[RMDB]
RNA sequence: GGGAACGACUCGAGUAGAGUCGAAAACAUGGAGGGCCAGGGCCAGGCAGACUCCCUUGGUACAGAUGCACAUGGACACAUGCACACAGGUGCAUGAAGACAAGGCAGGUGCAGGGAUGAAGGAGCACCCCAGUCUAAUCUUCGGAUUAGACUGGGGAAAAGAAACAACAACAACAAC
Reactivity to DMS in 0.01 (KOAc 150mM, MgCl2 10mM, bicine 150mM(pH8.5), 24C), signal-to-noise 1, nucleotides 027 to 126: c110a100u020g010g010a070g000g000g030c050c020a020g010g000g020c050c040a040g000g000c070a070g000a170c080u010c050c010c050u000u040g000g020u000a070c070a050g040a090u000g000c070a090c100a110u000g000g000a090c190a220c010a020u000g000c010a010c000a000c300a170g020g030u010g000c000a000u000g000a080a090g000a080c120a010a080g000g040c080a080g020g020u000g000c010a070g020g010g000a070u000g000a140a100g000g000a050g070c110a210